[RMDB]
RNA sequence: GGGAACGACUCGAGUAGAGUCGAAAAGCACAAGACUUCGAACAUUAUAGCAGUUAGUAGUUGCCUAAACCCAUUGCAAUAUAUGGGACAGUAGAGGUCGCAAGCCUAUAAUGUGCGGUGAACAUUCAAAAGGGAUGGUACUUCGGUACCAUCCCAACAAUCUGAAGAACUUCGGUUCUUCAGAUUGAAAAGAAACAACAACAACAAC
Reactivity to DMS in 0.01 (KOAc 150mM, MgCl2 10mM, bicine 150mM(pH8.5), 24C), signal-to-noise 3, nucleotides 027 to 156: g030c050a080c050a070a190g000a110c020u000u010c020g010a050a020c010a060u000u000a090u000a070g010c030a150g040u000u010a180g010u020a120g030u000u010g000c010c030u000a100a060a130c020c000c000a020u010u010g000c060a210a150u010a090u010a020u010g010g010g020a060c100a130g010u010a120g020a090g050g000u010c060g010c040a080a100g010c050c000u010a060u010a030a010u000g020u000g000c030g010g020u000g010a100a070c080a100u000u000c070a040a040a110a190g010g020g030a030u010g000g010u000a010c020u000u000c260g050g030u000a010c000c000a000u000c000c000c010a000a010
Reactivity to 2A3 in 0.01 (KOAc 150mM, MgCl2 10mM, bicine 150mM(pH8.5), 24C), signal-to-noise 4, nucleotides 027 to 156: g070c040a020c030a120a040g070a060c050u070u060c090g010a050a010c000a030u000u010a010u040a030g030c100a040g050u050u140a050g020u120a030g010u110u130g030c010c000u090a150a100a090c000c000c010a000u000u010g000c000a020a010u000a010u000a000u190g000g020g020a020c010a010g060u130a060g020a030g090g010u020c010g010c020a030a010g010c000c000u000a000u000a040a000u020g010u030g020c000g010g020u080g020a090a060c060a080u150u200c090a110a090a040a060g000g000g000a000u010g000g000u000a000c010u020u090c150g000g000u000a000c010c000a000u000c000c000c000a000a000

The record gives the reactivity of an RNA of 207 nucleotides to DMS and 2A3. The DMS profile rests on 6,667 reads. The reactions ran in a buffer of 150 mM KOAc, 10 mM MgCl2 and 150 mM bicine (pH 8.5), at 24 C. For 2A3 the reverse transcriptase was SuperScript II with manganese. Reactivities are given for positions 27 through 156. Reactivities are rounded to 0.1 and cut off at 0 and 3. The 2A3 profile rests on 3,108 reads. DMS adducts were read by reverse transcription with MarathonRT.